Structure probing data (DMS and 2A3) for a 177-nucleotide construct. The DMS profile rests on 5,744 reads. Source: RMDB library TTRDEL, as collected in RNAgym.
[RMDB]
RNA sequence: GGGAACGACUCGAGUAGAGUCGAAAAGAUAUGGAUAACAGCGUUGAAACCAGGCAUCGGAAACGAUGCUGGUGGAGCUGAGUCCUAAGUCAAAAGAGCAGUGUUUUGUUCGCAAAACACUGCUCAACGAGAUUACUAACUUCGGUUAGUAAUCUCGAAAAGAAACAACAACAACAAC
Reactivity to DMS in 0.01 (KOAc 150mM, MgCl2 10mM, bicine 150mM(pH8.5), 24C), signal-to-noise 5, nucleotides 027 to 126: g000a030u010a300u000g000g000a020u000a110a190c050a020g010c000g010u000u020g010a160a150a020c000c000a010g020g000c010a000u000c010g000g000a090a080a150c000g010a010u000g000c010u000g010g020u000g000g000a100g020c000u000g000a300g010u000c000c000u000a060a160g010u010c030a070a070a100a120g000a010g020c000a000g020u000g000u000u000u000u000g000u000u010c250g010c010a000a000a010a000c010a010c000u000g000c000u000c000a000a040
Reactivity to 2A3 in 0.01 (KOAc 150mM, MgCl2 10mM, bicine 150mM(pH8.5), 24C), signal-to-noise 5, nucleotides 027 to 126: g020a010u100a040u170g010g020a040u120a300a250c010a000g000c020g280u300u080g070a110a070a020c010c000a060g300g040c000a020u020c010g010g030a000a060a050c020g010a010u000g010c010u000g000g010u010g000g030a000g000c000u000g010a000g010u000c010c000u020a140a030g060u020c020a040a040a090a110g000a000g010c010a000g010u000g020u000u010u020u000g060u070u140c180g010c200a000a000a000a000c000a000c000u000g020c000u000c010a000a000